[RMDB]
Structure probing data (2A3) for a 207-nucleotide construct. Conditions: 150 mM KOAc, 10 mM MgCl2 and 150 mM bicine (pH 8.5), 24 C. For 2A3, 2,029 sequencing reads were counted.
RNA sequence: GGGAACGACUCGAGUAGAGUCGAAAAAGCGAUGAUACGUCAUCGCAACGAUUGCCUGAUCGUAAAACAGGAGACGGCCGUGGCCGCGACCACGUAAAAAAGCGUAACGGGGUCUACGGACCACGAAAAAAGCGCGGAACGUUCGCGUUCCGCGCAACCAAUACGAGGAGUUCGCUCCUCGUAUUGGAAAAGAAACAACAACAACAAC
Reactivity to 2A3 in 0.01 (KOAc 150mM, MgCl2 10mM, bicine 150mM(pH8.5), 24C), signal-to-noise 2, nucleotides 027 to 156: a020g030c010g000a010u000g000a000u040a070c240g060u010c020a000u000c010g000c000a010a020c010g010a010u010u030g060c020c000u020g010a020u010c030g100u190a010a010a040a020c030a030g010g040a020g080a050c200g130g000c080c010g000u000g000g010c020c000g020c000g010a020c010c030a010c010g020u040a020a090a010a010a040a010g070c030g020u020a070a000c000g020g010g010g030u000c020u050a040c120g030g020a110c010c000a000c020g000a080a000a040a000a020a020g000c000g010c000g010g000a000a010c010g030u090u070c160g020c020g100u010u000c000c000g080c060g010c000a000a000